[RMDB]
The record gives the reactivity of an RNA of 177 nucleotides to 2A3 and DMS. For DMS the reverse transcriptase was MarathonRT. Values cover nucleotides 27 to 126. The DMS profile rests on 8,050 reads. The RNA was probed in 150 mM KOAc, 10 mM MgCl2 and 150 mM bicine (pH 8.5) at 24 C.
RNA sequence: GGGAACGACUCGAGUAGAGUCGAAAAGGCGAAGAUCCGGGCAUCGCCAGGACCGGCGCCGCGGCGUUCCGUGUGGUCCAAGACCACGUCGCAUCGGUUUUCCGGCACGAAGACUUGGCGUCGGCGCGCCCUCGAGAUAAUUCGUUAUCUCGAGGGCAAAAGAAACAACAACAACAAC
Reactivity to 2A3 in 0.01 (KOAc 150mM, MgCl2 10mM, bicine 150mM(pH8.5), 24C), signal-to-noise 4, nucleotides 027 to 126: g030g000c030g020a050a020g040a080u070c030c040g010g010g010c020a070u050c020g000c010c010a010g000g110a070c010c000g000g000c020g000c000c020g000c030g030g030c010g020u150u030c080c040g100u110g030u030g070g030u000c040c120a140a030g020a020c010c010a000c000g020u030c020g020c030a070u110c050g020g000u050u010u050u040c030c000g080g000c050a000c080g040a050a010g040a040c030u100u100g000g010c000g010u020c000g010g020c010g010c020
Reactivity to DMS in 0.01 (KOAc 150mM, MgCl2 10mM, bicine 150mM(pH8.5), 24C), signal-to-noise 4, nucleotides 027 to 126: g000g000c040g020a070a040g000a100u010c030c020g010g000g000c090a110u030c050g000c040c020a100g000g010a130c020c000g000g010c080g000c020c000g010c070g000g010c050g010u010u000c040c030g010u040g010u000g010g000u000c010c190a120a100g010a050c010c010a010c010g000u010c030g020c080a140u030c100g000g000u010u000u020u050c010c050g020g000c260a120c120g010a030a050g020a050c060u010u020g010g000c000g010u000c010g000g010c070g000c130